[RMDB]
RNA sequence: GGGAACGACUCGAGUAGAGUCGAAAACUGCAAACGAAAAAGUAUGGGGAUGCUCCCCGGCAUUGAAUAUGUAUCACUAUUAACGUCACCAGAUUGAAAUGUACCGGCUAGAUGAAGACUAUUUGAUCAGUAUUGGAAUCUUCGGAUUCCAAUACUGAAAAGAAACAACAACAACAAC
Reactivity to 2A3 in 0.01 (KOAc 150mM, MgCl2 10mM, bicine 150mM(pH8.5), 24C), signal-to-noise 4, nucleotides 027 to 126: c030u030g000c070a050a100a040c040g120a140a030a010a040a000g070u120a100u220g030g000g010g020a030u090g070c000u090c020c020c010c000g010g010c020a010u100u090g080a100a090u180a020u140g070u050a020u120c050a030c050u040a070u250u070a060a060c050g040u040c020a010c010c040a020g050a160u020u040g040a120a090a080u100g000u060a110c030c000g030g000c000u040a030g000a150u090g040a110a000g020a010c050u060a120u170u040u110g060a050u030
Reactivity to DMS in 0.01 (KOAc 150mM, MgCl2 10mM, bicine 150mM(pH8.5), 24C), signal-to-noise 2, nucleotides 027 to 126: c030u000g000c080a050a060a080c120g040a080a120a100a040a140g000u020a100u040g000g000g020g000a090u020g000c050u000c060c000c050c020g010g000c010a040u000u000g000a220a030u020a020u000g000u000a060u020c010a040c070u020a020u010u000a060a090c080g020u000c080a030c040c010a030g000a130u020u000g010a020a040a060u030g000u000a080c040c000g000g000c040u000a100g000a060u000g000a120a090g020a050c100u000a120u000u010u000g010a140u000